Chemical mapping of a 207-nucleotide RNA with DMS and 2A3.
[RMDB]
RNA sequence: GGGAACGACUCGAGUAGAGUCGAAAACGCACUCGCAGCUUAAUAACCUGCGCUGAGCCCUUCUCCCCCAGCUUGCCUGUGUCCUAGGGAAUUGGAACGUCAUCCUUCACAGGAUCGUGUGGAAGUCAUUACUCGUGAGUGUUCGCACUCACGAGAAGAGAGAAUGUAACUUCGGUUACAUUCUCUCAAAAGAAACAACAACAACAAC
Reactivity to DMS in 0.01 (KOAc 150mM, MgCl2 10mM, bicine 150mM(pH8.5), 24C), signal-to-noise 3, nucleotides 027 to 156: c090g000c040a100c010u000c050g000c040a030g000c040u000u000a150a140u020a170a090c230c000u000g000c010g030c090u010g020a070g030c010c010c040u000u000c050u000c000c010c000c010c010a100g000c060u010u010g020c020c010u000g010u010g000u010c030c040u000a110g000g040g000a090a110u000u010g020g040a080a120c060g020u000c050a110u000c010c010u000u010c140a100c100a050g010g010a040u000c060g010u010g040u010g030g020a050a250g000u000c040a150u010u000a190c030u000c000g040u000g020a020g020u010g000u000u010c290g000c000a040c000u000c000a010c000g000a010g010a020a110
Reactivity to 2A3 in 0.01 (KOAc 150mM, MgCl2 10mM, bicine 150mM(pH8.5), 24C), signal-to-noise 3, nucleotides 027 to 156: c040g000c010a070c020u030c000g000c000a000g010c010u040u030a040a000u040a060a070c000c000u010g020c020g000c220u060g010a020g020c030c000c000u140u050c050u050c030c000c000c000c000a010g020c000u080u120g030c000c010u020g000u010g040u040c000c030u060a050g000g000g040a070a080u100u060g070g030a090a090c050g050u050c050a040u050c000c000u030u050c020a030c000a040g000g040a070u060c020g020u070g020u010g100g040a050a030g030u060c040a140u100u200a060c000u000c010g000u000g010a000g000u000g000u020u080c130g030c040a000c000u000c000a000c000g000a000g000a010a000

Values cover nucleotides 27 to 156. Conditions: 150 mM KOAc, 10 mM MgCl2 and 150 mM bicine (pH 8.5), 24 C.